[RMDB]
RNA sequence: GGGAACGACUCGAGUAGAGUCGAAAAGACCGCUGAAUGCGGAAGUACUAGAUCAACUAGAAAGUAGAUGAAUACAAAAGCUACGUCUCGAAACUAGUUGAUCUAGUUCACUCGAGACGUAGCAAGAAUCCGUACCGCGUUUCGACGCGGUACGGAUAAAAGAAACAACAACAACAAC
Reactivity to DMS in 0.01 (KOAc 150mM, MgCl2 10mM, bicine 150mM(pH8.5), 24C), signal-to-noise 1, nucleotides 027 to 126: g070a160c000c000g000c000u000g010a180a120u030g000c060g040g000a120a170g000u040a180c010u010a000g000a120u040c000a130a050c000u000a000g000a120a030a080g010u000a040g040a160u000g040a130a190u030a020c110a060a010a090a040g060c040u000a000c000g000u000c000u000c000g000a080a150a020c050u000a000g010u000u020g000a000u000c060u000a010g040u000u000c070a040c070u030c070g000a000g080a000c020g000u000a000g000c010a000a000g000a000
Reactivity to 2A3 in 0.01 (KOAc 150mM, MgCl2 10mM, bicine 150mM(pH8.5), 24C), signal-to-noise 1, nucleotides 027 to 126: g120a000c000c000g000c030u070g280a270a080u240g000c000g000g000a000a000g000u030a030c000u000a020g000a060u020c040a010a020c000u000a060g140a110a140a000g100u300a040g050a050u270g110a280a190u190a080c170a070a050a000a030g000c000u000a000c000g000u000c000u000c030g150a190a180a130c000u000a000g040u000u050g000a000u050c000u000a000g000u000u000c000a000c000u030c000g000a000g030a000c000g090u000a000g070c000a000a000g000a010
This 177-nucleotide RNA was probed chemically with DMS and 2A3. For DMS the reverse transcriptase was MarathonRT. The DMS profile rests on 1,333 reads. Conditions: 150 mM KOAc, 10 mM MgCl2 and 150 mM bicine (pH 8.5), 24 C. Reactivities are given for positions 27 through 126.